[RMDB]
RNA sequence: GGGAACGACUCGAGUAGAGUCGAAAAUGGCACGUAUGCCGAGGCAAAAGCCAACAACCUAUUACCUAAUAAUCCACUUAUUCUUAGCUAAAGUACUUCUUUUUUAGUGAUGUUCGAAAAAGAGUGGCACUGUGAAGAAUUUCGAUUCUUCACAGUGAAAAGAAACAACAACAACAAC
Reactivity to DMS in 0.01 (KOAc 150mM, MgCl2 10mM, bicine 150mM(pH8.5), 24C), signal-to-noise 6, nucleotides 027 to 126: u000g020g010c010a060c300g020u010a080u000g030c010c030g010a140g020g020c020a040a060a120a080g010c010c020a080a120c160a100a130c060c030u000a060u010u010a100c080c060u010a050a110u010a100a120u010c000c000a020c020u000u010a080u010u000c020u010u010a300g000c020u010a010a030a050g000u010a070c170u000u010c030u000u010u010u000u000u000a030g020u010g000a110u010g000u000u000c180g010a030a050a040a070a120g010a010g020u000g000g000
Reactivity to 2A3 in 0.01 (KOAc 150mM, MgCl2 10mM, bicine 150mM(pH8.5), 24C), signal-to-noise 7, nucleotides 027 to 126: u020g010g000c030a010c150g130u120a060u110g000c020c010g010a090g020g000c020a090a130a040a050g010c010c010a020a030c040a030a040c040c020u060a110u120u150a130c010c030u080a170a140u100a100a060u140c000c010a010c020u020u040a060u140u050c020u040u130a020g000c020u020a040a020a040g060u040a150c090u200u260c040u060u190u040u010u020u010a020g010u020g050a070u100g100u120u130c070g040a080a010a020a020a000g060a010g000u010g000g010